[RMDB]
RNA sequence: GGGAACGACUCGAGUAGAGUCGAAAACUUAGGGGACGGCAGAGAGUACAUGAAGCUGACCAGAGACGCCCUGCCUUUUCCUCAGAAUUGGAUGGUAAAGGAAAACGGAGUCUGGACCCCAAUUGUAGAACAAAGAGCAGCUCUAAGAGGAGGCUCCCCAUAUGUCGGUAUUCGUACCGACAUAUGGAAAAGAAACAACAACAACAAC
Reactivity to DMS in 0.01 (KOAc 150mM, MgCl2 10mM, bicine 150mM(pH8.5), 24C), signal-to-noise 1, nucleotides 027 to 156: c050u010u020a170g000g000g000g000a130c170g000g010c030a050g030a150g000a160g020u020a070c150a130u010g030a090a180g000c020u000g010a160c000c000a210g010a120g020a080c030g010c020c020c070u000g000c010c000u010u000u000u000c010c000u000c040a130g010a080a140u000u000g020g020a120u000g030g040u000a000a070a080g000g010a020a010a040a110c050g010g000a110g020u000c010u010g010g000a150c020c000c000c010a020a070u000u000g030u000a050g020a050a100c060a080a110a080g000a070g000c000a050g000c040u000c020u030a080a090g000a200g010g010a110g030g030c000u010c040c020
Reactivity to 2A3 in 0.01 (KOAc 150mM, MgCl2 10mM, bicine 150mM(pH8.5), 24C), signal-to-noise 3, nucleotides 027 to 156: c010u030u020a030g000g000g000g020a030c050g030g000c050a020g030a020g010a070g140u100a090c050a120u120g050a080a010g000c040u020g060a170c010c030a020g020a000g000a060c050g030c020c000c000u000g020c000c000u030u000u010u020c010c000u030c020a050g150a150a230u250u180g110g040a080u120g010g000u020a010a040a040g030g000a070a170a070a070c090g020g010a020g050u000c020u020g070g080a150c010c020c000c000a010a040u070u080g040u060a040g030a160a000c040a130a110a030g030a010g000c010a070g050c000u010c020u080a150a100g020a040g070g020a010g000g010c000u020c010c020